[RMDB]
RNA sequence: GGGAACGACUCGAGUAGAGUCGAAAAUUGCGCCUCCGAUUCGCCGUCGGCAUUUCCCCAGCAGCCAUGACCUACCAGGCUGCGGUGCGGCUCGCCGUACAGGUCAUCCCUCAUCGGGCGCGUCCUGGAUAGGGCUAUACUUUCGAGUAUAGCCCAACCAUGGUUACUUCUUCGGAAGUAACCAUGGAAAAGAAACAACAACAACAAC
Reactivity to 2A3 in 0.01 (KOAc 150mM, MgCl2 10mM, bicine 150mM(pH8.5), 24C), signal-to-noise 2, nucleotides 027 to 156: u080u090g040c030g020c000c040u070c040c020g000a030u100u080c090g010c040c020g030u030c010g030g000c010a030u070u090u040c000c010c000c020a030g020c000a000g000c020c010a180u110g040a140c060c020u160a200c060c050a030g000g030c000u000g000c010g000g020u080g010c040g010g010c040u070c100g020c020c020g080u100a020c040a090g000g010u070c030a120u130c050c000c030u100c030a060u070c020g000g000g030c010g000c020g010u020c000c010u050g030g020a130u120a190g020g000g000c000u020a020u000a000c000u040u090u220c290g050a010g000u000a000u020a030g000c000c000c000a000a000
Reactivity to DMS in 0.01 (KOAc 150mM, MgCl2 10mM, bicine 150mM(pH8.5), 24C), signal-to-noise 1, nucleotides 027 to 156: u010u000g040c060g010c010c000u000c040c070g000a080u010u000c010g040c030c070g040u000c070g030g020c040a290u000u000u000c030c000c000c090a080g000c020a020g010c020c010a140u000g010a160c130c070u020a200c130c070a230g000g010c030u020g040c000g010g000u000g010c080g010g040c190u020c110g020c020c000g000u000a080c020a040g000g030u000c080a120u000c000c020c010u000c040a090u000c000g000g040g080c000g000c010g000u000c000c010u010g000g000a150u000a050g010g030g050c020u000a020u000a000c030u000u010u000c230g040a030g020u000a030u000a020g000c010c010c000a000a020